[RMDB]
RNA sequence: GGGAACGACUCGAGUAGAGUCGAAAAUUACCUCAUAUUUCAGAAUGCGUGUGCCUAUGCAUUCAUAAUGGAGAGAGAUGAUAAAGGUUCUCAGUUGCAUUAAAACUAAACACAAUAUAGGCAGCUGGAACUGUUAGGAAUUCGUUCCUAACAGUUCAAAAGAAACAACAACAACAAC
Reactivity to DMS in 0.01 (KOAc 150mM, MgCl2 10mM, bicine 150mM(pH8.5), 24C), signal-to-noise 7, nucleotides 027 to 126: u020u010a070c040c000u000c040a100u010a130u010u010u000c070a120g010a040a000u000g020c010g030u000g040u040g010c150c090u030a030u010g010c000a010u000u000c010a060u010a080a090u000g000g000a030g000a130g000a040g000a040u000g000a080u020a060a110a110g010g000u000u010c000u000c010a020g010u000u000g000c030a050u010u030a050a070a090a160c190u020a050a090a060c230a090c220a090a060u000a060u000a090g000g000c000a040g000c040u000g000
Reactivity to 2A3 in 0.01 (KOAc 150mM, MgCl2 10mM, bicine 150mM(pH8.5), 24C), signal-to-noise 9, nucleotides 027 to 126: u090u050a080c010c000u050c020a090u100a080u100u100u110c070a040g000a010a000u010g000c020g020u100g060u110g090c030c030u110a040u050g000c000a000u000u000c010a010u120a030a090u100g090g000a040g000a000g000a000g010a080u100g020a030u130a160a130a030g110g010u070u000c030u000c010a030g010u030u030g010c030a050u100u160a090a080a050a040c090u140a070a190a000c120a020c040a210a060u170a020u030a120g050g000c000a010g030c020u050g020
Chemical mapping of a 177-nucleotide RNA with DMS and 2A3. For DMS the reverse transcriptase was MarathonRT. The RNA was probed in 150 mM KOAc, 10 mM MgCl2 and 150 mM bicine (pH 8.5) at 24 C. Values cover nucleotides 27 to 126.